[RMDB]
RNA sequence: GGGAACGACUCGAGUAGAGUCGAAAAAGCUGCACCAACUCACCUACGAACACAACCUGUCUGCAUUCAUCAUGUUCUCGUCCAUGGCCGGAAUGAUAGGCAGUCCCGGUCAGGGUAACUACGCGGCUGAGUCGCUGCAGUUCGCUGCAGCGACUCAAAAAGAAACAACAACAACAAC
Reactivity to 2A3 in 0.01 (KOAc 150mM, MgCl2 10mM, bicine 150mM(pH8.5), 24C), signal-to-noise 2, nucleotides 027 to 126: a000g020c000u040g010c000a020c010c000a090a050c020u070c030a100c000c000u060a090c020g030a080a000c020a020c000a100a150c040c000u030g060u040c090u050g000c050a070u100u030c030a080u060c000a030u100g000u070u020c010u010c010g150u040c000c060a000u050g020g000c010c060g020g000a020a000u180g000a080u060a040g090g060c110a000g060u040c000c040c000g000g000u040c110a040g000g000g060u000a010a010c020u080a040c100g000c000g050g000c050